[RMDB]
RNA sequence: GGGAACGACUCGAGUAGAGUCGAAAAACGUUACAGUUAAUUAUAACUGCAAACAAUAACAAUUCUUACGCUGUAGCUGCCUAAACACCAGCAUAGCGUGAUCCGUCUGACUUCACCCAAGGGUUAGAUCCGGGUCUCAAAUUAAUUGGGUUACGUUUAGCUAUGUUACGUUCGCGUAACAUAGCUAAAAAGAAACAACAACAACAAC
Reactivity to 2A3 in 0.01 (KOAc 150mM, MgCl2 10mM, bicine 150mM(pH8.5), 24C), signal-to-noise 3, nucleotides 027 to 156: a010c030g000u020u020a020c000a010g030u010u040a160a220u250u170a240u140a230a030c010u040g090c140a110a090a080c030a070a110u130a060a040c070a110a130u100u070c060u100u110a010c000g010c000u000g010u070a090g000c000u000g000c000c020u020a020a030a020c000a000c020c010a000g010c000a020u060a010g000c000g000u000g010a010u000c000c000g020u000c000u000g000a000c010u000u000c020a020c000c040c000a000a010g010g010g010u010u010a010g010a030u050c200c130g030g000g050u020c050u020c090a100a140a090u230u240a020a100u020u000g000g000g000u030u080a040c100g000u010u010
Notes: Structure probing data (2A3) for a 207-nucleotide construct. It was measured as part of the RMDB library RSTRND. Reactivities are given for positions 27 through 156. The RNA was probed in 150 mM KOAc, 10 mM MgCl2 and 150 mM bicine (pH 8.5) at 24 C.